Structure probing data (2A3 and DMS) for a 177-nucleotide construct.
RNA sequence: GGGAACGACUCGAGUAGAGUCGAAAAAUCGUGAGCGUCGCGGCGCUUCGCAAACGCGGCGGCGAAUUCGCACGAUGAACGAGGCAUGCGGCGGUAUCGAACUAUUCUGACCACAUGGAAGAGCGAAGCAUAGUCAGUGGUUCGCCACUGACUAUGCAAAAGAAACAACAACAACAAC
Reactivity to 2A3 in 0.01 (KOAc 150mM, MgCl2 10mM, bicine 150mM(pH8.5), 24C), signal-to-noise 3, nucleotides 027 to 126: a000u010c000g000u010g010a060g100c020g000u020c010g000c040g130g000c010g030c000u070u060c020g000c040a000a000a050c030g020c030g170g000c000g000g010c010g020a010a160u150u130c040g030c030a020c010g020a040u030g000a040a030c070g010a040g060g060c030a010u040g020c010g020g010c030g020g000u040a050u080c100g050a040a050c040u040a110u130u010c020u030g120a200c030c000a030c040a070u080g050g020a110a020g060a030g080c070g060a070a000
Reactivity to DMS in 0.01 (KOAc 150mM, MgCl2 10mM, bicine 150mM(pH8.5), 24C), signal-to-noise 4, nucleotides 027 to 126: a030u000c010g020u010g000a100g020c000g020u000c010g030c000g000g010c060g000c040u010u010c280g000c140a090a080a060c010g020c010g000g020c000g000g020c040g000a130a100u010u020c170g020c000a030c020g030a020u000g020a090a150c070g000a080g010g010c030a070u010g010c040g020g000c040g000g000u000a070u000c080g010a090a090c130u000a100u000u010c010u000g020a150c040c030a040c080a070u020g000g000a080a040g010a080g020c050g010a120a090
Annotation:
Conditions: 150 mM KOAc, 10 mM MgCl2 and 150 mM bicine (pH 8.5), 24 C. The data come from the RNA Mapping Database (RMDB), library OK2TST.